[RMDB]
Structure probing data (DMS and 2A3) for a 207-nucleotide construct.
RNA sequence: GGGAACGACUCGAGUAGAGUCGAAAAGCUAACGACGAUACGUUCGCACUAGCCGCUUAGGCUAGCCAUCGCCUUGAAAUCUCUCCUAUUGGUUAGAGGAUCGAUGGUCACCCCAAAUAGGAUAGCGAGGGAAGCACGCUUGAGGCUGAACCGCGAAGAAUCUAUCGUACUUCGGUACGAUAGAUUCAAAAGAAACAACAACAACAAC
Reactivity to DMS in 0.01 (KOAc 150mM, MgCl2 10mM, bicine 150mM(pH8.5), 24C), signal-to-noise 2, nucleotides 027 to 156: g010c040u000a030a220c020g000a000c010g000a120u000a080c090g030u000u000c050g000c060a100c030u000a020g000c000c010g010c220u020u000a130g000g020c020u000a030g000c000c020a030u000c010g030c040c000u000u000g010a080a090a050u000c020u000c130u030c090c000u000a110u000u020g010g040u000u010a300g000a070g000g000a080u020c040g010a060u000g020g000u000c060a090c070c020c000c050a070a030a100u000a070g040g000a050u000a050g000c040g000a090g030g010g020a080a180g000c040a020c070g000c100u000u020g030a170g020g000c020u000g010a100a210c020c010g010c020g000a150a220
Reactivity to 2A3 in 0.01 (KOAc 150mM, MgCl2 10mM, bicine 150mM(pH8.5), 24C), signal-to-noise 6, nucleotides 027 to 156: g000c010u020a010a000c010g120a020c120g130a120u140a210c020g080u020u020c030g000c010a050c030u000a000g000c000c010g060c210u240u300a040g000g000c000u000a000g000c000c000a000u010c010g000c020c000u020u040g070a100a110a070u010c010u000c010u000c010c000u010a010u020u040g010g020u020u050a060g000a020g040g010a060u300c060g000a000u010g010g050u090c050a110c010c000c000c000a000a020a010u010a010g000g010a000u020a030g000c030g020a300g040g000g000a010a000g000c000a020c060g110c070u130u220g070a160g110g000c000u000g010a020a010c000c000g000c010g010a020a020
About this RNA: The RNA was probed in 150 mM KOAc, 10 mM MgCl2 and 150 mM bicine (pH 8.5) at 24 C.